[RMDB]
Structure probing data (2A3) for a 177-nucleotide construct.
The RNA was probed in 150 mM KOAc, 10 mM MgCl2 and 150 mM bicine (pH 8.5) at 24 C.
High 2A3 reactivity points to a flexible backbone, as in loops and unpaired stretches.
The 2A3 profile rests on 433 reads.
Source: RMDB library OK1LIB, as collected in RNAgym.

RNA sequence: GGGAACGACUCGAGUAGAGUCGAAAACACGCAUUGCCGCAUCCUUGCGACCUGCCCGGCCGGGUCGGGCGGCAGCGUGGCGGCCGCCAUCGUUUCGGCCGUCGGAACGCAACCGACCGGCACCGAAUACGCGUGGGUCUUUCGAGACCCACGCGUAAAAAGAAACAACAACAACAAC
Reactivity to 2A3 in 0.01 (KOAc 150mM, MgCl2 10mM, bicine 150mM(pH8.5), 24C), signal-to-noise 1, nucleotides 027 to 126: c070a000c000g030c020a120u030u080g030c000c000g100c020a140u000c020c020u030u090g020c060g000a000c000c000u070g000c040c000c000g030g050c130c020g090g000g020u020c020g000g020g000c000g070g000c000a000g000c000g000u000g000g000c020g000g070c000c000g040c060c050a300u300c300g060u020u050u170c000g000g000c000c020g020u000c030g030g160a210a000c090g060c000a000a160c000c000g010a010c060c000g050g000c030a020c000c000g300a160a020